The record gives the reactivity of an RNA of 177 nucleotides to DMS and 2A3. The reactions ran in a buffer of 150 mM KOAc, 10 mM MgCl2 and 150 mM bicine (pH 8.5), at 24 C. DMS (dimethyl sulfate) methylates the pairing face of unpaired adenines and cytosines. The data come from the RNA Mapping Database (RMDB), libraries RFM100 and RFMREP.
RNA sequence: GGGAACGACUCGAGUAGAGUCGAAAAAGCGCGGCAUACGUGCCGCGCAGCCGAUGAUGGCAACAGGGUAGCUGCCGAUUGAUGACGAAGCCGUUCCAGUCUGAGGAGCGUGAGUACGCUCACGCAAAUCAACAAGAGCUUUCGAGCUCUUGUUGAUAAAAGAAACAACAACAACAAC
Reactivity to DMS in 0.01 (KOAc 150mM, MgCl2 10mM, bicine 150mM(pH8.5), 24C), signal-to-noise 4, nucleotides 027 to 126: a090g000c010g030c020g030g040c000a020u010a120c180g000u000g000c020c010g020c010g050c020a000g000c050c010g000a100u020g000a090u030g000g000c030a060a090c140a070g020g020g000u010a090g000c040u010g000c020c020g000a100u000u000g010a110u010g010a090c030g010a090a060g030c020c000g010u000u010c010c000a110g020u020c070u000g020a110g010g000a260g000c010g020u000g000a020g010u000a100c220g010c000u000c010a000c000g020c020a060a080
Reactivity to 2A3 in 0.01 (KOAc 150mM, MgCl2 10mM, bicine 150mM(pH8.5), 24C), signal-to-noise 7, nucleotides 027 to 126: a000g010c010g000c020g030g000c010a010u040a090c280g090u030g000c000c000g000c010g010c000a000g010c000c010g080a190u180g010a040u150g030g010c010a080a010c030a110g110g030g040u100a030g010c040u040g030c010c030g060a090u050u140g080a100u100g020a020c030g050a070a010g040c020c000g000u030u000c020c000a050g070u030c040u060g070a100g060g060a080g030c000g000u000g000a000g000u050a060c300g010c060u010c010a010c010g000c010a070a070